[RMDB]
RNA sequence: GGGAACGACUCGAGUAGAGUCGAAAACGGUCCUGCCAUGAGACCGUAACGAGGACAUGUCGCCUCGAAUGGCGUCGGGUAGCCGGCAGCUUACCCCAAGGAUGAGCGCCUAAUGCCGGUACCCGGGUAUACGCUACCCCGUUCGCGGGGUAGCGAAUCAUAUGUCUUGUUUCGACAAGACAUAUGAAAAAGAAACAACAACAACAAC
Reactivity to DMS in 0.01 (KOAc 150mM, MgCl2 10mM, bicine 150mM(pH8.5), 24C), signal-to-noise 2, nucleotides 027 to 156: c050g000g030u010c000c020u000g070c030c200a120u020g000a070g010a010c000c000g020u010a000a080c060g010a080g030g040a090c020a130u000g030u000c020g010c000c000u000c010g020a090a080u010g030g020c010g040u020c030g010g020g000u000a080g010c000c010g000g000c000a130g050c010u000u000a020c010c020c070c100a170a240g030g020a040u000g010a020g020c010g000c260c280u000a020a080u000g040c010c000g000g000u000a010c010c010c000g010g000g030u030a080u000a050c030g020c000u000a020c020c000c000c000g040u000u000c210g060c000g050g030g010g020u000a000g040c000g000a010a030
Reactivity to 2A3 in 0.01 (KOAc 150mM, MgCl2 10mM, bicine 150mM(pH8.5), 24C), signal-to-noise 4, nucleotides 027 to 156: c000g000g010u010c000c010u020g000c000c000a030u030g020a030g000a040c000c020g040u050a000a000c010g000a010g000g020a030c070a180u240g050u220c140g010c020c000u000c000g000a000a010u010g000g010c020g100u040c010g000g010g000u010a100g300c000c000g000g000c010a000g000c000u010u010a030c010c010c010c110a100a160g060g000a180u080g010a000g010c000g060c030c040u080a110a030u050g010c000c000g000g000u000a000c000c000c000g010g000g000u200a150u030a050c020g000c000u010a000c000c010c000c010g020u030u020c120g000c010g060g000g000g000u000a000g000c000g000a010a000
The record gives the reactivity of an RNA of 207 nucleotides to DMS and 2A3. For DMS the reverse transcriptase was MarathonRT. The 2A3 profile rests on 3,717 reads. The reactions ran in a buffer of 150 mM KOAc, 10 mM MgCl2 and 150 mM bicine (pH 8.5), at 24 C. Reactivities are given for positions 27 through 156.